[RMDB]
RNA sequence: GGGAACGACUCGAGUAGAGUCGAAAAUUUCAGAUAUGAAUCUAUCUGAUUCAGAAGGGAAGAACUUGCAUCAGUAUCUCAAUUUCAAUUCAAACAUGGGUUUGAUUCACACUCCAUGUUCUGAGAACCCAGAGCUACACUUCGGUGUAGCUCUGGGAAAAGAAACAACAACAACAAC
Reactivity to 2A3 in 0.01 (KOAc 150mM, MgCl2 10mM, bicine 150mM(pH8.5), 24C), signal-to-noise 1, nucleotides 027 to 126: u040u030u030c010a010g030a050u100a040u070g050a120a050u010c000u020a000u020c000u030g010a000u190u060c070a060g060a030a070g000g060g020a060a060g070a090a040c030u030u070g020c070a090u100c040a050g010u070a160u000c000u000c020a140a160u120u140u180c100a050a080u150u030c060a020a010a010c000a030u010g040g030g040u080u010u130g100a180u280u160c030a040c000a000c010u020c000c000a070u040g010u010u020c030u060g020a060g070a040a000